[RMDB]
RNA sequence: GGGAACGACUCGAGUAGAGUCGAAAACGUGCUGUUAACGCCAUUCAACCCAAGUAGGAUAUGCUAAACACUGCCGCUUGAAGUCUGUUUAGAUGAAAUAUAAUCAAGCUAGUAUCAUGUUGGUUGUUUAUUGCUUAGCAUGAUGCGAAAAUUAUCACCAAGGUUAUCAGUUCGCUGAUAACCUUGGAAAAGAAACAACAACAACAAC
Reactivity to 2A3 in 0.01 (KOAc 150mM, MgCl2 10mM, bicine 150mM(pH8.5), 24C), signal-to-noise 2, nucleotides 027 to 156: c020g100u120g050c040u040g080u300u150a110a010c060g000c050c020a070u140u090c020a050a080c000c000c010a010a050g160u140a060g090g140a210u080a060u130g000c010u000a000a000a000c000a000c030u000g010c000c020g010c000u000u010g010a010a000g020u000c010u020g040u010u010u010a020g000a020u030g090a020a250a010u210a050u050a000a040u000c010a000a000g000c000u010a000g000u000a010u010c010a010u000g040u040u010g110g000u000u060g110u090u240u100a240u130u260g030c050u080u100a000g000c000a000u000g000a000u010g000c000g000a000a000a070a030u130u080a070u090c040a040
Reactivity to DMS in 0.01 (KOAc 150mM, MgCl2 10mM, bicine 150mM(pH8.5), 24C), signal-to-noise 2, nucleotides 027 to 156: c070g020u010g080c000u020g020u000u000a080a080c050g000c040c010a120u030u000c060a170a200c030c020c000a100a170g020u010a070g040g040a140u000a210u010g000c030u000a080a080a110c020a010c070u000g020c000c060g000c030u020u000g020a110a150g000u000c100u000g020u020u000u000a090g030a110u000g000a250a160a090u020a120u000a080a090u000c030a010a070g040c060u000a100g010u010a000u000c020a000u010g020u000u010g030g030u020u000g020u010u000u000a130u040u000g020c040u010u000a040g000c030a030u000g000a000u000g010c040g010a020a040a050a100u000u000a140u000c050a230